Source: RMDB library OK3TST, as collected in RNAgym. An RNA of 207 nucleotides, treated with 2A3 and read out base by base.

RNA sequence: GGGAACGACUCGAGUAGAGUCGAAAAGCUCAAAAGGAUACAUGAGUGUCCCUCAAGUGUUAUGUGCUGUUACUCGAACAGUUUCCACUGAUGCUGAAGGGUCUUUGAGAAUUUACUUAGCUGAUCUGGGCGACAAGGAGUUAUCUCCCAUAGAUGGCCACGGAUUGAAGUUCGCUUCAAUCCGUGGAAAAGAAACAACAACAACAAC
Reactivity to 2A3 in 0.01 (KOAc 150mM, MgCl2 10mM, bicine 150mM(pH8.5), 24C), signal-to-noise 1, nucleotides 027 to 156: g010c010u050c000a000a000a140a000g150g000a030u090a110c030a130u210g040a030g090u030g030u000c050c050c010u000c010a030a120g000u060g040u120u130a070u140g070u040g020c000u010g030u200u040a120c020u000c030g140a060a000c040a070g000u060u060u040c000c020a080c010u020g060a110u090g000c000u030g050a030a110g010g010g000u000c000u050u150u110g030a030g000a010a010u070u100u070a100c050u040u000a000g050c020u030g040a060u130c010u000g080g000g080c040g010a030c010a020a070g090g020a040g030u030u130a050u070c000u000c000c000c000a000u020a080g070a040u140g010g000
The RNA was probed in 150 mM KOAc, 10 mM MgCl2 and 150 mM bicine (pH 8.5) at 24 C.